[RMDB]
The record gives the reactivity of an RNA of 177 nucleotides to DMS and 2A3.
DMS adducts were read by reverse transcription with MarathonRT.
The 2A3 profile rests on 1,472 reads.
For DMS, 2,564 sequencing reads were counted.
High DMS reactivity at an A or C suggests that its Watson-Crick edge is free.
The RNA was probed in 150 mM KOAc, 10 mM MgCl2 and 150 mM bicine (pH 8.5) at 24 C.
RNA sequence: GGGAACGACUCGAGUAGAGUCGAAAAGUGCCCAGCAGACCAGUUGGCUGAUCCUAAUUAUGAUGCUCUGCUUGUUUCCAUGACUAAUCAUAGUUUUAGUGUCAAUAAACAUAUAGGUGCUCCGGCACCACCACCAUUCGUUCGCGAAUGGUGGUGGAAAAGAAACAACAACAACAAC
Reactivity to DMS in 0.01 (KOAc 150mM, MgCl2 10mM, bicine 150mM(pH8.5), 24C), signal-to-noise 3, nucleotides 027 to 126: g010u010g010c050c000c060a070g020c060a070g010a110c050c040a080g010u000u000g000g010c090u000g010a070u000c120c030u000a040a050u000u010a080u000g010a090u010g010c160u000c020u000g020c080u000u000g010u010u000u000c030c010a120u000g000a070c030u000a080a060u000c060a050u030a080g000u010u000u010u020a070g010u010g000u000c050a050a050u010a090a050a040c070a050u010a090u010a080g020g010u000g000c010u010c170c190g010g000c030a090
Reactivity to 2A3 in 0.01 (KOAc 150mM, MgCl2 10mM, bicine 150mM(pH8.5), 24C), signal-to-noise 2, nucleotides 027 to 126: g020u060g050c010c000c030a000g020c020a000g040a050c050c000a050g040u080u070g070g050c030u050g040a040u060c000c020u070a090a050u120u070a090u100g040a010u060g020c010u000c030u020g000c000u070u020g070u030u070u010c040c030a070u120g000a020c020u160a140a050u030c010a100u060a140g010u030u020u010u100a050g000u050g030u010c010a010a080u150a180a050a000c070a010u190a020u100a250g010g010u000g020c020u000c050c050g070g020c020a000